Chemical mapping of a 177-nucleotide RNA with DMS and 2A3. Source: RMDB library OK2TST, as collected in RNAgym. DMS (dimethyl sulfate) methylates the pairing face of unpaired adenines and cytosines. Values are in units of 0.01, from 0 to 300, in steps of 10. Conditions: 150 mM KOAc, 10 mM MgCl2 and 150 mM bicine (pH 8.5), 24 C. 2A3 adducts were read by reverse transcription with SuperScript II with manganese. For DMS the reverse transcriptase was MarathonRT. 2A3 is a SHAPE reagent: it acylates the 2'-hydroxyl of flexible nucleotides of all four kinds.
RNA sequence: GGGAACGACUCGAGUAGAGUCGAAAAUUCUGCAUUCCAUUGCACAUGCUUUAAACAUCAAUUCAAGGAACCUUUACUUUAACCUGUUAAACUAUUGUCUGCAGAAUGCUGCAUAUAUCGAUAGUACCAGCCUUCAGAAAUUCGUUUCUGAAGGCUGAAAAGAAACAACAACAACAAC
Reactivity to DMS in 0.01 (KOAc 150mM, MgCl2 10mM, bicine 150mM(pH8.5), 24C), signal-to-noise 2, nucleotides 027 to 126: u000u000c020u000g030c070a080u020u000c040c070a050u000u000g020c100a030c100a050u000g000c080u010u020u000a140a080a140c060a070u000c040a060a130u000u010c090a040a100g030g000a090a060c150c040u000u000u000a020c100u000u000u000a090a060c060c050u010g000u000u000a040a100a100c030u000a010u000u000g000u010c090u000g020c010a010g000a210a100u000g010c030u000g000c030a020u000a050u000a110u000c040g010a040u000a040g020u000a120c140
Reactivity to 2A3 in 0.01 (KOAc 150mM, MgCl2 10mM, bicine 150mM(pH8.5), 24C), signal-to-noise 2, nucleotides 027 to 126: u040u020c000u000g020c010a050u090u060c040c020a020u060u080g010c050a060c010a060u090g030c010u060u110u150a100a120a030c030a030u060c030a040a150u120u010c020a010a010g060g000a070a050c030c030u070u070u080a050c040u120u050u090a130a050c000c020u030g070u080u110a140a160a000c000u000a010u000u050g010u020c000u040g000c020a030g040a220a190u220g100c030u020g020c050a000u110a010u010a030u280c010g010a010u000a030g030u050a050c010